[RMDB]
RNA sequence: GGGAACGACUCGAGUAGAGUCGAAAAGGCGAAAUUCGUUUCGCCAGAGCGUACUACUCAAGACAUGCUGUAUAAGCACGUUGAAAGCUCCCAAAUAGGAGCUGGAGUGCGAAUACAGCAACAGCUUGAGUAUCGCCGUUUGACCAUUCGUGGUCAAUGUGACGUUAAUCUUCGGAUUAACGUCACAAAAAGAAACAACAACAACAAC
Reactivity to 2A3 in 0.01 (KOAc 150mM, MgCl2 10mM, bicine 150mM(pH8.5), 24C), signal-to-noise 2, nucleotides 027 to 156: g020g010c030g030a020a040a030u260u230c230g000u060u010u000c010g000c020c000a000g010a060g000c000g080u120a110c050u000a000c000u020c000a000a010g000a100c090a220u100g000c000u000g010u000a030u020a040a020g010c000a000c010g190u270u050g020a030a010a000g010c000u000c000c000c020a210a300a100u300a100g000g010a010g030c000u000g050g040a090g010u000g000c000g000a020a000u000a010c010a000g000c000a000a000c000a020g040c000u000u000g000a000g000u000a000u070c000g000c000c000g050u080u040u040g000a000c010c000a020u040u100c210g120u010g000g000u000c000a030a070
Reactivity to DMS in 0.01 (KOAc 150mM, MgCl2 10mM, bicine 150mM(pH8.5), 24C), signal-to-noise 1, nucleotides 027 to 156: g000g000c000g040a020a000a070u010u000c300g040u010u000u010c000g080c000c020a000g010a020g050c020g020u020a060c110u020a040c000u020c020a000a050g020a040c040a300u000g010c000u000g020u000a020u010a070a300g040c000a010c000g000u000u000g000a240a140a150g000c000u000c010c010c040a020a170a280u020a080g030g010a040g010c000u000g040g030a110g020u000g020c000g010a220a070u000a000c010a100g020c020a000a010c040a100g020c000u000u000g010a080g000u020a050u010c020g000c010c020g050u020u010u000g050a060c000c000a160u000u000c300g010u000g020g000u000c000a040a060